RNA sequence: GGGAACGACUCGAGUAGAGUCGAAAAACGCUCAGAUCAGAUGGGACGGAGUCGAAUCCGCAGGCGUGCACGAUGCGUGCACCGGUGUCGGCGGCCUGCUUGUGGUACAAGUCGAUGCUGUUGCGCACUAGGGUCCAUGAUUCGUCAUGGACCCUAGAAAAGAAACAACAACAACAAC
Reactivity to DMS in 0.01 (KOAc 150mM, MgCl2 10mM, bicine 150mM(pH8.5), 24C), signal-to-noise 2, nucleotides 027 to 126: a100c160g000c060u010c030a130g010a110u000c130a110g010a100u010g020g030g000a120c050g000g000a060g000u010c060g010a090a080u010c030c030g010c070a050g030g040c090g000u040g000c010a040c020g010a090u020g010c060g010u000g010c030a030c010c090g020g020u000g020u000c000g000g020c000g000g020c010c140u000g010c120u010u010g000u010g020g010u000a210c070a080a080g010u000c040g000a030u000g020c000u000g000u000u000g000c040g010c120a170
Reactivity to 2A3 in 0.01 (KOAc 150mM, MgCl2 10mM, bicine 150mM(pH8.5), 24C), signal-to-noise 2, nucleotides 027 to 126: a000c030g000c000u040c030a030g010a190u070c010a030g010a110u110g080g000g060a050c070g000g000a000g010u040c030g030a080a060u050c020c020g050c030a010g010g110c050g030u030g010c000a020c170g210a150u300g070c050g030u010g000c030a000c000c060g000g010u050g000u020c010g010g020c030g030g000c000c000u060g000c010u130u180g060u110g100g010u070a080c020a150a000g000u010c020g010a030u060g000c000u030g060u140u130g000c080g000c030a060